RNA sequence: GGGAACGACUCGAGUAGAGUCGAAAAGAUAUGGAGGCACUGAUGGGCAACAGCUGUCGGUCGGAAACGACCGUACAGACAUGCCUAAGGUGCCUCCUAAGUCAAAAUCUCGUGUUCGCACGAGAAACAAAACUUACAAGUUCGCUUGUAAGUUUUGAAAAGAAACAACAACAACAAC
Reactivity to 2A3 in 0.01 (KOAc 150mM, MgCl2 10mM, bicine 150mM(pH8.5), 24C), signal-to-noise 2, nucleotides 027 to 126: g030a010u060a020u110g020g010a000g000g000c020a000c020u110g040a150u300g060g000g000c080a250a070c060a270g050c000u000g000u010c020g000g000u020c000g030g000a070a040a040c000g010a000c010c000g000u040a010c030a000g030a020c010a080u190g010c000c000u010a020a020g000g000u000g010c000c000u000c000c000u000a000a000g010u000c000a000a000a000a160u010c000u010c010g000u000g000u000u060c140g010c020a000c000g000a020g000a010a000a000
Reactivity to DMS in 0.01 (KOAc 150mM, MgCl2 10mM, bicine 150mM(pH8.5), 24C), signal-to-noise 5, nucleotides 027 to 126: g000a040u010a300u010g000g000a020g010g020c010a010c000u010g010a250u030g000g010g000c010a030a090c280a180g000c000u000g010u000c020g000g020u010c000g010g000a100a090a220c010g000a010c010c000g010u010a010c010a000g000a040c100a300u000g000c000c010u010a180a300g000g010u000g010c000c000u000c000c000u000a000a080g010u010c030a090a140a120a160u000c000u000c000g030u000g010u010u000c250g010c010a000c000g000a000g000a010a090a160